[RMDB]
RNA sequence: GGGAACGACUCGAGUAGAGUCGAAAAGUGGCUGACCCUAUUUCGCGGCGCUGUAGACGGGCCAGCGGGUGUGGUAUGAAACAGCGUCAGGUAAAUACACGGUGUUUGUCCGCCAUAUUGUGUACCCUCGUCUCCUCCCCCACCCACGGGCAUACCCUAUGACUACUUGAUUCGUCAAGUAGUCAUAAAAAGAAACAACAACAACAAC
Reactivity to DMS in 0.01 (KOAc 150mM, MgCl2 10mM, bicine 150mM(pH8.5), 24C), signal-to-noise 3, nucleotides 027 to 156: g030u000g010g010c020u010g010a090c020c040c010u000a250u000u000u000c040g030c040g030g020c010g030c010u000g020u000a050g020a180c150g010g010g010c040c030a090g020c040g010g010g030u000g020u010g020g000u010a100u000g000a260a130a050c020a040g030c020g020u000c030a060g030g000u000a030a050a070u010a090c090a070c040g000g000u000g010u000u000u000g010u000c050c030g060c010c030a090u010a090u000u010g020u000g020u000a060c030c010c030u000c040g010u010c020u000c020c030u000c030c000c000c040c030a100c030c010c010a040c040g030g020g020c040a110u000a040c020c010c040
Reactivity to 2A3 in 0.01 (KOAc 150mM, MgCl2 10mM, bicine 150mM(pH8.5), 24C), signal-to-noise 4, nucleotides 027 to 156: g070u030g020g000c010u010g020a060c030c000c000u000a060u040u090u060c150g030c090g060g000c020g030c010u010g010u040a070g060a160c110g010g060g000c030c030a050g030c060g020g070g000u090g030u060g040g000u080a090u180g060a080a080a030c020a000g010c000g030u010c020a000g060g090u110a030a080a070u120a060c120a030c120g050g020u050g050u090u160u110g040u040c020c030g020c000c010a060u110a100u070u180g060u030g030u110a060c010c000c000u030c020g070u030c020u030c020c020u050c000c000c000c010c000a020c010c000c000a010c020g010g020g000c010a020u070a060c020c000c000
The data come from the RNA Mapping Database (RMDB), library OK3TST.
The record gives the reactivity of an RNA of 207 nucleotides to DMS and 2A3.
For DMS the reverse transcriptase was MarathonRT.
The reactions ran in a buffer of 150 mM KOAc, 10 mM MgCl2 and 150 mM bicine (pH 8.5), at 24 C.
For DMS, 8,756 sequencing reads were counted.
High 2A3 reactivity points to a flexible backbone, as in loops and unpaired stretches.